[RMDB]
The record gives the reactivity of an RNA of 177 nucleotides to DMS and 2A3. DMS adducts were read by reverse transcription with MarathonRT. The reactions ran in a buffer of 150 mM KOAc, 10 mM MgCl2 and 150 mM bicine (pH 8.5), at 24 C.
RNA sequence: GGGAACGACUCGAGUAGAGUCGAAAAGCAGCGCAUCGAGCAGAGCUGCGAACACUUGAGCGCAUCCUGCGGAGCUCUUGUGGAUUAGGACGUUCUCGAGGAUCAACCGAUUCGAGUUCGUCCGAAAGGCUAGCUUCUCGUUCGCGAGGAGCUAGCCAAAAGAAACAACAACAACAAC
Reactivity to DMS in 0.01 (KOAc 150mM, MgCl2 10mM, bicine 150mM(pH8.5), 24C), signal-to-noise 3, nucleotides 027 to 126: g010c030a000g000c030g010c040a250u040c170g030a200g040c070a090g030a100g000c000u000g000c000g030a120a110c010a020c020u000u000g010a040g030c000g010c070a090u000c040c030u000g030c130g030g010a300g000c030u000c000u000u000g000u000g000g010a190u050u000a110g000g000a010c000g020u000u010c010u000c010g000a020g000g000a150u000c110a130a140c300c100g000a270u000u030c000g020a040g000u000u000c000g000u010c000c000g020a060a060a090
Reactivity to 2A3 in 0.01 (KOAc 150mM, MgCl2 10mM, bicine 150mM(pH8.5), 24C), signal-to-noise 4, nucleotides 027 to 126: g000c010a000g000c000g010c090a150u200c200g120a030g060c090a020g060a020g040c010u000g000c010g000a050a010c030a000c010u040u050g010a020g020c010g000c080a080u140c020c080u060g010c130g100g040a060g020c000u020c000u000u010g020u010g000g020a060u120u110a020g000g000a000c000g010u010u000c000u000c010g020a020g050g060a060u100c040a040a240c090c070g020a020u030u030c000g000a010g000u000u000c010g000u000c000c000g000a030a000a000